[RMDB]
RNA sequence: GGGAACGACUCGAGUAGAGUCGAAAAUGAUGCACACGUACUUUAACACGAGCAUGGAUCGCAACUUGACCAGUUGCAAGUGCACGGUUUACUUCGUGAGUAUCCGCAAACACCAUGCCUUCACCUACUAGGGGUAGUCAUUCGUGACUACCCCUAGAAAAGAAACAACAACAACAAC
Reactivity to DMS in 0.01 (KOAc 150mM, MgCl2 10mM, bicine 150mM(pH8.5), 24C), signal-to-noise 3, nucleotides 027 to 126: u010g030a060u010g000c020a060c060a070c020g000u000a040c140u020u000u000a040a020c060a060c070g010a080g000c010a010u000g010g000a130u000c180g000c010a010a000c000u000u000g010a210c300c090a090g010u000u010g010c000a040a140g030u000g020c070a130c020g010g000u000u000u000a010c210u000u000c150g010u000g000a070g010u000a010u000c010c220g000c050a040a110a090c100a110c020c020a030u010g000c020c100u000u010c070a050c010c070u000a120
Reactivity to 2A3 in 0.01 (KOAc 150mM, MgCl2 10mM, bicine 150mM(pH8.5), 24C), signal-to-noise 2, nucleotides 027 to 126: u090g020a030u050g060c010a000c020a010c030g020u110a080c100u090u090u090a110a030c170a050c110g030a010g000c000a000u030g040g030a180u090c030g000c010a000a040c020u110u160g060a040c030c040a030g000u020u010g010c000a030a050g030u000g060c020a000c030g040g000u030u030u060a020c010u020u050c000g070u020g050a020g000u000a040u000c020c050g010c030a100a100a020c050a020c040c000a000u070g000c000c010u160u080c100a160c050c030u020a080